Description:
An RNA of 177 nucleotides, treated with 2A3 and DMS and read out base by base. 2A3 adducts were read by reverse transcription with SuperScript II with manganese. High 2A3 reactivity points to a flexible backbone, as in loops and unpaired stretches. The RNA was probed in 150 mM KOAc, 10 mM MgCl2 and 150 mM bicine (pH 8.5) at 24 C. Values cover nucleotides 27 to 126.
[RMDB]
RNA sequence: GGGAACGACUCGAGUAGAGUCGAAAAUGAGAACUUUAUCGCGCCCGGCCGCGAACUUCUCCAGGAAGUCCACCAGGUCAUUCAGAAUGGUCCCCGCUCGACCUAGCUUGUGGCCGAUCAGGAGCUGCAUCGUUACAAUGUUCGCAUUGUAACGAUGAAAAGAAACAACAACAACAAC
Reactivity to 2A3 in 0.01 (KOAc 150mM, MgCl2 10mM, bicine 150mM(pH8.5), 24C), signal-to-noise 3, nucleotides 027 to 126: u150g010a040g010a080a030c030u110u190u100a190u090c010g000c010g010c060c090c000g070g080c070c010g020c000g020a040a050c030u060u030c010u010c020c020a030g150g000a050a020g060u000c020c020a020c030c030a050g010g000u040c010a050u150u080c030a060g130a200a120u130g070g030u000c000c000c020c010g030c020u060c020g030a020c010c000u010a050g080c050u050u060g020u050g070g000c010c010g010a050u040c040a050g080g000a030g040c010u020g000
Reactivity to DMS in 0.01 (KOAc 150mM, MgCl2 10mM, bicine 150mM(pH8.5), 24C), signal-to-noise 1, nucleotides 027 to 126: u010g000a100g000a070a090c150u000u020u010a090u000c040g020c050g000c040c050c090g000g000c090c030g020c030g010a030a090c110u000u010c010u000c060c180a120g010g000a060a080g000u010c040c020a090c070c090a100g000g000u000c030a050u010u010c130a110g000a080a090u010g000g000u000c020c040c020c090g000c100u010c070g000a020c020c000u000a060g010c100u000u000g030u000g020g010c020c010g010a070u000c100a070g010g010a060g000c070u000g010